[RMDB]
RNA sequence: GGGAACGACUCGAGUAGAGUCGAAAAACGCUUCUAGGGAGAUAUGGAAUACGUUACCUAACGGGGCAAUAGUUUGGUGGACCAAUUCAGGAGCUGGUCACGUUGGAGUGAAAGCUGGAGAUUUUGCGUCGUGUACCUUUUUCGAAAGGUACACGACAAAAGAAACAACAACAACAAC
Reactivity to DMS in 0.01 (KOAc 150mM, MgCl2 10mM, bicine 150mM(pH8.5), 24C), signal-to-noise 3, nucleotides 027 to 126: a070c110g020c300u020u000c030u020a140g000g010g040a140g010a080u000a040u000g010g010a070a070u000a120c060g000u000u010a080c020c020u000a060a110c190g010g010g010g030c090a080a110u020a040g020u000u000u000g000g020u000g010g010a070c050c030a060a140u010u010c090a090g000g000a120g020c040u000g020g000u010c040a020c060g010u000u000g020g010a100g000u000g020a030a060a080g010c020u010g010g010a110g010a130u000u010u020u000g010c270